[RMDB]
RNA sequence: GGGAACGACUCGAGUAGAGUCGAAAACUGGGCAGGUGCCACAGGAUGAGGCCACUGAAAGAUCUGCUUCAUUCUUUGAUCUGUAUUCUGAAGUUCCAGAUUGUUCAUCUAGAGGCAGAGACAUCUCCUCUCAUCAUUGAUUCGUCAAUGAUGAGAGAAAAGAAACAACAACAACAAC
Reactivity to DMS in 0.01 (KOAc 150mM, MgCl2 10mM, bicine 150mM(pH8.5), 24C), signal-to-noise 5, nucleotides 027 to 126: c040u000g010g000g030c010a080g020g000u000g000c070c030a070c090a080g000g010a050u000g000a070g000g000c020c190a120c130u010g000a080a090a090g000a120u020c030u020g000c010u000u010c010a060u020u000c050u010u000u020g000a040u020c020u020g010u010a050u010u000c040u020g020a120a110g000u020u010c040c030a040g000a080u000u010g000u010u000c060a110u010c070u010a080g010a060g000g030c040a030g000a050g000a080c150a090u000c040u010c100
Reactivity to 2A3 in 0.01 (KOAc 150mM, MgCl2 10mM, bicine 150mM(pH8.5), 24C), signal-to-noise 9, nucleotides 027 to 126: c020u020g000g060g000c020a030g010g040u060g080c040c010a050c030a030g050g020a040u070g030a040g010g010c020c060a060c090u080g100a100a130a030g090a100u040c030u080g010c000u020u010c010a080u060u060c030u080u060u070g020a050u010c040u050g070u080a140u120u110c030u070g110a180a060g100u130u050c030c000a020g010a090u060u100g030u070u070c050a080u010c060u060a030g000a010g070g000c040a010g020a010g030a090c020a110u040c030u010c010
Conditions: 150 mM KOAc, 10 mM MgCl2 and 150 mM bicine (pH 8.5), 24 C. Chemical mapping of a 177-nucleotide RNA with DMS and 2A3. Values cover nucleotides 27 to 126. The DMS profile rests on 11,786 reads. For DMS the reverse transcriptase was MarathonRT. The data come from the RNA Mapping Database (RMDB), library OK1LIB.